Overview:
An RNA of 177 nucleotides, treated with DMS and 2A3 and read out base by base. For 2A3 the reverse transcriptase was SuperScript II with manganese. Reactivities are rounded to 0.1 and cut off at 0 and 3. The reactions ran in a buffer of 150 mM KOAc, 10 mM MgCl2 and 150 mM bicine (pH 8.5), at 24 C. For 2A3, 1,237 sequencing reads were counted.
[RMDB]
RNA sequence: GGGAACGACUCGAGUAGAGUCGAAAAGAGAUGCUGCAAAAGCAAGAUUGGAACAUGUUAAAGAGGUUGCAUCUCGUCAUCCAGAUCUCAAGCUUUUGUACGCUGUUGGAGGCUGGGAAAACUCUCAUAUCGACUAUGCAUUCGUGCAUAGUCGAUAAAAAGAAACAACAACAACAAC
Reactivity to DMS in 0.01 (KOAc 150mM, MgCl2 10mM, bicine 150mM(pH8.5), 24C), signal-to-noise 3, nucleotides 027 to 126: g030a030g010a060u010g030c010u000g000c030a040a040a050a060g040c020a120a020g010a060u010u000g000g010a120a160c160a080u000g010u020u000a060a110a180g010a140g000g030u000u000g000c110a050u000c000u000c010g010u000c160a050u000c010c020a060g000a070u000c000u000c050a080a100g010c000u010u010u000u010g030u010a110c240g000c010u000g010u010u010g010g000a110g000g000c040u000g010g020g000a090a040a080a170c130u000c040u000c070a240
Reactivity to 2A3 in 0.01 (KOAc 150mM, MgCl2 10mM, bicine 150mM(pH8.5), 24C), signal-to-noise 2, nucleotides 027 to 126: g020a010g020a010u040g000c000u000g000c000a050a010a030a080g000c000a010a040g080a070u100u150g080g040a110a030c050a150u060g050u120u260a250a140a040g090a030g100g000u150u110g020c010a050u020c010u000c010g020u020c040a060u000c000c000a030g060a300u000c010u020c030a070a020g000c000u000u060u100u100g090u070a050c070g000c040u030g120u090u050g090g000a010g060g000c060u040g000g030g060a020a010a000a060c010u050c000u030c030a040
DMS adducts were read by reverse transcription with MarathonRT.